The record gives the reactivity of an RNA of 177 nucleotides to DMS. Reactivities are rounded to 0.1 and cut off at 0 and 3. Values cover nucleotides 27 to 126. The RNA was probed in 150 mM KOAc, 10 mM MgCl2 and 150 mM bicine (pH 8.5) at 24 C. DMS adducts were read by reverse transcription with MarathonRT.
RNA sequence: GGGAACGACUCGAGUAGAGUCGAAAAGCAGUGGCUCCCCUGCCCAGCCUGCUCUCCCUAACCCCUUGUCCGCAAGGGGUGAUGGCCGGCUGGUUGUGGGCACUGGCGGUCAAGUGUGGAGGAGAGGGUCUUGGGAGACUUUCGAGUCUCCCAAGACAAAAGAAACAACAACAACAAC
Reactivity to DMS in 0.01 (KOAc 150mM, MgCl2 10mM, bicine 150mM(pH8.5), 24C), signal-to-noise 2, nucleotides 027 to 126: g000c060a050g000u000g010g000c090u000c050c040c030c060u000g010c110c020c010a040g010c000c000u000g030c010u000c100u020c060c060c040u000a300a060c000c000c000c000u000u010g000u010c220c240g010c010a000a000g000g000g010g020u000g010a050u000g010g000c010c090g020g000c010u000g000g010u010u010g020u000g030g000g000c020a040c050u000g010g010c050g010g000u020c070a070a060g020u000g050u000g020g000a070g010g000a100g010a110g010g000